The data come from the RNA Mapping Database (RMDB), library OK1LIB. An RNA of 177 nucleotides, treated with 2A3 and read out base by base.

RNA sequence: GGGAACGACUCGAGUAGAGUCGAAAAGCCGAUCGUCAUGCGAGUGUACUUCAAUGAUUGGCGACUAUCUGUGCGAUCCCGUUGUGCACGCCACCGGUCAGAUAGCCAACGGCGGGUACGUCAGUGGGCCCUGGUGGCUAUUCGUAGCCACCAGGGCAAAAGAAACAACAACAACAAC
Reactivity to 2A3 in 0.01 (KOAc 150mM, MgCl2 10mM, bicine 150mM(pH8.5), 24C), signal-to-noise 1, nucleotides 027 to 126: g000c000c000g000a080u000c010g080u050c030a020u140g010c030g110a030g060u170g120u110a080c000u180u130c000a000a250u260g030a140u010u170g000g020c030g000a000c000u060a030u050c050u100g090u080g030c000g000a070u100c010c020c000g000u070u100g000u000g070c000a000c000g000c000c000a100c000c000g030g020u110c000a010g120a300u280a060g100c010c000a110a000c050g120g000c060g070g000g030u120a110c000g000u010c040a050g040u300g000g040